[RMDB]
RNA sequence: GGGAACGACUCGAGUAGAGUCGAAAAGAUAUGGACUGUAGCAACAGCUGUGAUCGGUCGGAAACGACCGCGUACAGACAUGCUAUUGUCCUAAGUCAAAAGUAGAGGUACUUCGGUACCUCUACAAGGUGUUGAAUAUCUUCGGAUAUUCAACACCAAAAGAAACAACAACAACAAC
Reactivity to DMS in 0.01 (KOAc 150mM, MgCl2 10mM, bicine 150mM(pH8.5), 24C), signal-to-noise 3, nucleotides 027 to 126: g010a040u010a300u000g000g010a020c020u000g000u010a000g010c010a040a120c270a180g000c000u010g010u000g000a050u000c010g010g000u000c000g000g000a090a080a190c000g010a010c020c000g020c210g000u010a030c000a020g010a090c080a240u000g000c000u000a000u000u000g000u000c000c000u000a020a110g010u000c080a080a100a140a120g020u000a000g010a010g020g000u000a010c000u000u010c130g000g000u010a000c000c000u000c000u000a000c000a050a070
Reactivity to 2A3 in 0.01 (KOAc 150mM, MgCl2 10mM, bicine 150mM(pH8.5), 24C), signal-to-noise 2, nucleotides 027 to 126: g020a010u050a000u090g010g010a010c010u000g010u020a010g020c010a020a130c100a220g130c020u000g010u020g040a110u160c020g000g000u000c010g010g000a080a050a030c010g000a000c020c000g000c010g000u040a000c000a020g190a190c050a090u070g000c000u010a000u010u040g000u010c000c000u020a060a000g060u040c020a020a030a000a240g000u000a000g010a010g000g000u010a010c000u050u080c270g050g000u000a010c040c000u020c000u010a000c000a000a010